[RMDB]
Chemical mapping of a 207-nucleotide RNA with DMS and 2A3. The DMS profile rests on 2,138 reads. In probing experiments dimethyl sulfate is read out at A N1 and C N3, which are open when not base-paired. The reactions ran in a buffer of 150 mM KOAc, 10 mM MgCl2 and 150 mM bicine (pH 8.5), at 24 C.
RNA sequence: GGGAACGACUCGAGUAGAGUCGAAAAUCUCGAUCUCGAUCGACUAGAGUCCUCUGAAGGACUUCGAGAUCUCAGUCUCUCCUAGAGAGAGAGGAAGAGCUGACUGAGAGAUCGAAGAGUCGAGACUCUCUAGCUCUUCAGAGAGAGGACUAGUCAGACUCCAUAUUCCAUUCGUGGAAUAUGGAGUAAAAGAAACAACAACAACAAC
Reactivity to DMS in 0.01 (KOAc 150mM, MgCl2 10mM, bicine 150mM(pH8.5), 24C), signal-to-noise 2, nucleotides 027 to 156: u000c000u000c010g020a070u000c030u000c020g020a080u010c060g000a050c040u000a110g020a170g000u000c010c000u000c040u020g000a200a190g010g000a030c020u000u000c050g000a080g010a300u000c010u000c020a020g000u010c000u000c000u010c010c010u020a150g020a250g000a060g000a070g000a120g000g000a110a060g000a030g000c060u000g020a130c150u020g010a060g020a060g020a250u030c020g000a060a140g000a210g000u000c050g020a110g010a160c000u000c010u010c020u000a060g020c010u010c020u010u000c020a040g000a110g010a130g010a080g010g040a180c010u000a040g010u010c040a140g000
Reactivity to 2A3 in 0.01 (KOAc 150mM, MgCl2 10mM, bicine 150mM(pH8.5), 24C), signal-to-noise 4, nucleotides 027 to 156: u000c010u010c010g050a110u030c020u030c050g070a140u040c070g020a030c010u000a020g040a060g150u030c020c010u010c080u090g070a080a030g060g030a030c000u020u000c000g000a000g010a020u000c010u000c000a020g030u010c000u010c000u000c010c030u170a070g040a020g000a010g010a020g040a020g270g010a070a110g020a010g050c200u120g060a040c010u020g000a000g010a010g020a030u010c010g010a020a030g060a030g120u050c040g060a040g100a130c010u010c000u000c020u090a040g040c030u020c000u050u020c010a000g010a000g010a010g020a030g030g030a020c020u010a000g030u040c100a020g060